An RNA of 207 nucleotides, treated with 2A3 and DMS and read out base by base. The reactions ran in a buffer of 150 mM KOAc, 10 mM MgCl2 and 150 mM bicine (pH 8.5), at 24 C. For 2A3, 4,001 sequencing reads were counted. Source: RMDB library M2RFPK, as collected in RNAgym.
[RMDB]
RNA sequence: GGGAACGACUCGAGUAGAGUCGAAAAAGAUCCACGCUACGGCGUGGAUCACACGUUCAUCCCUAUUGGGACGGAAGUAGGCAUAGUGCCGAAGGAACGCAUUAGUCAUGCGCGACGGCGCAUGACACACAUCAGAGUCACUUCGGUGACUCUGAAACUUGUUAACAUACUUCGGUAUGUUAACAAGAAAAGAAACAACAACAACAAC
Reactivity to 2A3 in 0.01 (KOAc 150mM, MgCl2 10mM, bicine 150mM(pH8.5), 24C), signal-to-noise 5, nucleotides 027 to 156: a010g010a000u000c000c000a010c010g020c010u040a060c280g140g000c000g010u000g000g000a000u000c000a000c000a000c000g010u010u010c000a030u050c020c000c010u110a300u170u300g010g000g000a010c020g010g030a030a020g010u020a020g020g000c040a070u140a240g120u210g150c010c000g000a000a020g030g010a030a000c010g000c020a050u060u180a060g000u010c000a000u010g000c010g010c010g120a150c130g110g020c000g000c000a000u000g000a000c000a000c010a000c000a070u050c010a000g000a000g010u000c000a000c000u060u130c240g090g000u010g000a000c010u000c000u000g000a000a000a000
Reactivity to DMS in 0.01 (KOAc 150mM, MgCl2 10mM, bicine 150mM(pH8.5), 24C), signal-to-noise 2, nucleotides 027 to 156: a070g000a030u000c010c000a050c000g080c000u000a150c220g060g000c000g090u010g010g000a010u010c000a030c070a000c040g010u000u000c020a220u010c000c000c000u030a170u000u010g020g030g000a010c040g020g000a090a250g010u000a120g020g000c040a170u000a120g000u000g010c000c000g040a100a150g010g010a150a110c090g020c060a130u020u000a080g040u000c050a070u000g000c000g000c000g040a140c200g010g050c000g000c020a000u000g000a020c000a050c140a000c070a070u000c000a030g000a040g000u000c000a030c000u010u000c290g030g000u010g000a010c010u000c000u000g000a000a000a050